[RMDB]
RNA sequence: GGGAACGACUCGAGUAGAGUCGAAAACAGGGUGUGUGACUGGUUGACCAGAGGGGCGUGCACUUUGUUCACCCUGUGGGCCACCUAGUCACCAACCCUCAAACAUCGUUCUGUUCGCAGAACGAUGGCGUAGCAUCUAGUUCGCUAGAUGCUACGCAAAAGAAACAACAACAACAAC
Reactivity to 2A3 in 0.01 (KOAc 150mM, MgCl2 10mM, bicine 150mM(pH8.5), 24C), signal-to-noise 2, nucleotides 027 to 126: c060a010g000g000g000u000g000u020g010u000g020a010c000u010g000g010u020u020g010a050c010c000a020g010a010g150g020g010g040c140g050u040g000c040a040c020u180u220u260g030u010u020c010a010c000c010c000u070g120u030g120g000g030c000c000a010c010c020u070a010g000u010c010a000c000c000a000a010c000c000c020u010c010a090a100a010c010a000u000c010g000u000u000c000u010g020u040u080c250g000c080a010g000a000a000c000g010a010u000g040
Reactivity to DMS in 0.01 (KOAc 150mM, MgCl2 10mM, bicine 150mM(pH8.5), 24C), signal-to-noise 1, nucleotides 027 to 126: c150a030g010g010g030u000g000u050g010u000g020a000c010u010g000g010u000u000g000a050c000c000a080g000a100g000g010g000g010c110g010u000g010c060a160c250u010u010u000g010u000u000c000a040c000c000c000u020g000u000g000g000g000c050c040a010c030c010u000a010g000u000c010a000c000c040a030a050c000c010c000u000c110a050a080a290c020a000u000c000g000u000u000c000u010g000u000u020c200g000c010a000g010a000a020c000g010a000u000g000
Structure probing data (2A3 and DMS) for a 177-nucleotide construct. The reactions ran in a buffer of 150 mM KOAc, 10 mM MgCl2 and 150 mM bicine (pH 8.5), at 24 C. For DMS, 1,625 sequencing reads were counted.